[RMDB]
RNA sequence: GGGAACGACUCGAGUAGAGUCGAAAAUCUAAGAGCGUAACACACACUCAGACUGUACGAGAGUCUGACACACACAUACGCUAGUGUAUCGUGUGUGUGAUAUCGAUGUAGCACGAAAAUGAAAGAACGUUAAGGCGAUCUUCGGAUCGCCUUAACGAAAAGAAACAACAACAACAAC
Reactivity to 2A3 in 0.01 (KOAc 150mM, MgCl2 10mM, bicine 150mM(pH8.5), 24C), signal-to-noise 1, nucleotides 027 to 126: u100c070u090a190a040g000a000g060c070g080u070a160a030c030a030c010a000c000a010c080u010c020a000g010a010c020u030g090u220a030c090g040a020g000a000g140u000c010u000g010a010c000a010c000a000c000a000c000a000u030a030c000g040c170u060a160g040u020g000u140a010u050c050g000u030g010u010g000u000g000u020g010a030u030a030u130c030g060a070u060g100u090a020g100c040a000c060g080a040a040a000a090u270g060a120a060a030g050a090a050
Reactivity to DMS in 0.01 (KOAc 150mM, MgCl2 10mM, bicine 150mM(pH8.5), 24C), signal-to-noise 1, nucleotides 027 to 126: u000c000u010a140a080g010a040g010c050g040u010a070a070c080a170c140a030c040a030c090u020c030a000g020a030c010u000g010u000a040c130g010a140g000a000g000u000c000u000g000a000c130a060c040a010c000a010c000a030u000a010c010g010c240u000a090g010u060g010u000a020u000c190g040u000g020u000g000u000g000u000g020a070u010a020u010c130g000a150u000g000u000a040g030c140a030c140g000a050a060a030a090u010g020a050a110a110g000a040a060